[RMDB]
RNA sequence: GGGAACGACUCGAGUAGAGUCGAAAAGAUAUGGAAGACCCUAGUACAGGCCCACCCUAAGACAGAUUUCGUCGGAAACGACGAAAUUCGAGGGUGGGAACUACCUGGACCGGGUCUUCCUAAGUCACGUACUCCUAUUCUUCGGAAUAGGAGUACGAAAAGAAACAACAACAACAAC
Reactivity to DMS in 0.01 (KOAc 150mM, MgCl2 10mM, bicine 150mM(pH8.5), 24C), signal-to-noise 2, nucleotides 027 to 126: g000a020u010a020u020g000g000a020a000g010a000c000c000c000u010a010g040u000a270c020a000g050g000c060c010c000a000c000c000c000u000a300a140g030a000c300a070g000a000u000u000u010c000g010u000c000g000g000a000a010a070c000g000a010c000g010a000a010a010u000u000c000g010a000g050g030g010u000g000g010g000a020a000c020u000a300c050c030u000g010g010a070c300c240g000g010g010u000c000u000u000c000c010u010a000a000g000u000c000a300